[RMDB]
RNA sequence: GGGAACGACUCGAGUAGAGUCGAAAAGAGUGUUAUGAUGAUGGAGUCUUGUGCUCUUAGUCUAGCUCUGGUCUACCGCUAGGAUUUCGGUCCUAGCGGAAAAGUAAAGCACCUUCGGGUGCUUUACCACGAGAACGUAGUUCGCUACGUUCUCGUGAAAAGAAACAACAACAACAAC
Reactivity to DMS in 0.01 (KOAc 150mM, MgCl2 10mM, bicine 150mM(pH8.5), 24C), signal-to-noise 5, nucleotides 027 to 126: g000a020g020u000g000u010u010a050u010g010a010u000g000a150u010g010g000a030g010u000c050u010u000g020u010g010c010u000c000u000u000a300g000u000c010u000a110g000c000u000c000u000g010g010u010c030u000a120c000c000g000c000u010a010g000g010a010u000u010u010c190g030g000u000c000c000u000a000g010c010g000g000a000a010a040a120g010u000a000a010a010g000c000a010c000c000u000u020c210g030g000g020u000g000c000u000u000u000a000c010
Reactivity to 2A3 in 0.01 (KOAc 150mM, MgCl2 10mM, bicine 150mM(pH8.5), 24C), signal-to-noise 4, nucleotides 027 to 126: g030a000g010u060g060u290u180a100u220g030a010u020g010a050u290g020g000a010g000u010c070u290u230g090u300g050c000u010c010u010u050a010g000u000c010u010a020g000c000u000c000u010g010g050u000c030u080a100c010c000g000c010u000a000g000g010a010u040u050u100c300g070g000u000c010c000u000a000g000c010g000g000a000a000a010a020g000u000a000a000a000g010c000a000c010c000u030u070c210g090g010g010u000g000c000u000u000u000a000c010
An RNA of 177 nucleotides, treated with DMS and 2A3 and read out base by base. For DMS, 9,165 sequencing reads were counted. For 2A3, 4,506 sequencing reads were counted. Values cover nucleotides 27 to 126. For 2A3 the reverse transcriptase was SuperScript II with manganese. The RNA was probed in 150 mM KOAc, 10 mM MgCl2 and 150 mM bicine (pH 8.5) at 24 C.